An RNA of 207 nucleotides, treated with 2A3 and read out base by base. The RNA was probed in 150 mM KOAc, 10 mM MgCl2 and 150 mM bicine (pH 8.5) at 24 C.

RNA sequence: GGGAACGACUCGAGUAGAGUCGAAAAUUAAUACUGCUACAUUUUUAAGACCCUUAGUUAUUUAGCUUUACCGCCCAGGAUGGGGUGCAGCGUUCCUGCAAUAUCCAAGGCACCUAGGUGCAGCCUUCAUGCCUCAUGCCGUUCGCGGCAUGAGGAAGGAGAAUGUAGAGUUCGCUCUACAUUCUCCAAAAGAAACAACAACAACAAC
Reactivity to 2A3 in 0.01 (KOAc 150mM, MgCl2 10mM, bicine 150mM(pH8.5), 24C), signal-to-noise 1, nucleotides 027 to 156: u110u020a060a090u120a160c070u110g000c020u030a020c070a120u080u110u140u110u140a080a030g050a120c010c020c060u020u040a030g020u050u040a080u160u090u080a010g020c000u000u040u040a060c000c000g030c010c030c040a050g090g000a020u060g000g000g000g080u000g000c000a010g030c000g020u060u020c000c000u020g040c030a050a110u020a030u240c040c000a040a050g070g000c000a000c000c020u040a080g000g030u020g040c020a030g050c040c000u060u080c060a080u100g040c000c000u000c000a000u000g000c020c000g030u040u000c180g030c000g090g000c000a000u000g000a000g000g000a010a010